Chemical mapping of a 177-nucleotide RNA with DMS and 2A3. For DMS the reverse transcriptase was MarathonRT. Reactivities are given for positions 27 through 126.

RNA sequence: GGGAACGACUCGAGUAGAGUCGAAAACAGGCGCGGACCAGCGGCAACAGCAGCAUUACCACCACCAGCGCCCAGGUCACCAGGCUGAUCGGGCUCGACCAGAGGAUGCCCAGUUCACCGUUGGAGAAUAAUCCUGGCUAUUCGUAGCCAGGAUUAUAAAAGAAACAACAACAACAAC
Reactivity to DMS in 0.01 (KOAc 150mM, MgCl2 10mM, bicine 150mM(pH8.5), 24C), signal-to-noise 4, nucleotides 027 to 126: c100a100g020g010c030g010c050g000g010a110c060c060a070g010c070g010g020c150a040a080c100a070g010c070a070g000c020a050u010u010a100c060c040a100c060c030a080c050c040a080g010c160g010c030c020c020a060g020g010u000c030a040c040c070a090g000g030c100u000g010a040u000c020g010g000g020c000u000c040g010a100c070c070a140g010a070g000g000a100u000g000c010c010c040a170g000u000u000c070a090c040c040g000u000u010g000g000a120g010a120
Reactivity to 2A3 in 0.01 (KOAc 150mM, MgCl2 10mM, bicine 150mM(pH8.5), 24C), signal-to-noise 1, nucleotides 027 to 126: c040a040g040g000c030g050c060g100g050a060c010c020a010g020c000g010g000c040a030a020c000a060g000c010a000g000c000a020u020u170a100c000c030a010c060c020a000c000c010a040g040c000g000c020c000c020a030g010g060u020c020a020c100c030a040g120g050c080u020g000a060u040c000g010g020g050c000u010c010g090a050c020c050a020g020a030g140g040a020u100g000c000c040c000a030g020u040u030c020a030c080c040g040u040u060g040g020a060g080a060
2A3 adducts were read by reverse transcription with SuperScript II with manganese.
For 2A3, 1,605 sequencing reads were counted.